[RMDB]
RNA sequence: GGGAACGACUCGAGUAGAGUCGAAAAGAUAUGGAUCCCUGGUUUCCGAGGAUCUUAAUCGGAAACGAUUAAGGGAGGAGGGCCACAUGGGAUCCUAAGUCAAACUGUGAAGCUUCGGCUUCACAGAUCAUGCUUUUCGGUUCGCCGAAAAGCAUGAAAAAGAAACAACAACAACAAC
Reactivity to DMS in 0.01 (KOAc 150mM, MgCl2 10mM, bicine 150mM(pH8.5), 24C), signal-to-noise 2, nucleotides 027 to 126: g030a020u010a290u010g010g000a010u000c000c000c000u000g020g050u000u010u000c010c020g050a300g010g000a110u000c000u000u000a000a000u000c000g000g020a100a060a150c010g030a020u020u000a020a040g000g020g000a050g000g010a300g000g000g010c060c000a130c300a070u010g010g020g000a020u010c000c010u010a010a090g000u000c050a170a110a260c010u010g000u000g000a000a000g000c000u010u010c200g060g010c000u000u000c000a000c000a000g000a040
Reactivity to 2A3 in 0.01 (KOAc 150mM, MgCl2 10mM, bicine 150mM(pH8.5), 24C), signal-to-noise 1, nucleotides 027 to 126: g000a010u060a030u150g000g000a010u000c000c000c000u010g040g060u070u280u110c000c000g070a260g030g010a020u020c010u010u020a000a010u000c010g030g030a020a070a020c000g010a000u000u000a000a000g000g000g000a020g040g020a070g040g150g000c010c010a100c050a240u190g000g000g000a000u000c000c000u010a000a000g090u040c070a170a100a080c000u040g000u010g020a000a010g020c000u040u210c300g180g000c000u020u030c030a020c000a020g010a000
An RNA of 177 nucleotides, treated with DMS and 2A3 and read out base by base. Source: RMDB library TTRDES, as collected in RNAgym. Conditions: 150 mM KOAc, 10 mM MgCl2 and 150 mM bicine (pH 8.5), 24 C. Reactivities are given for positions 27 through 126. DMS adducts were read by reverse transcription with MarathonRT.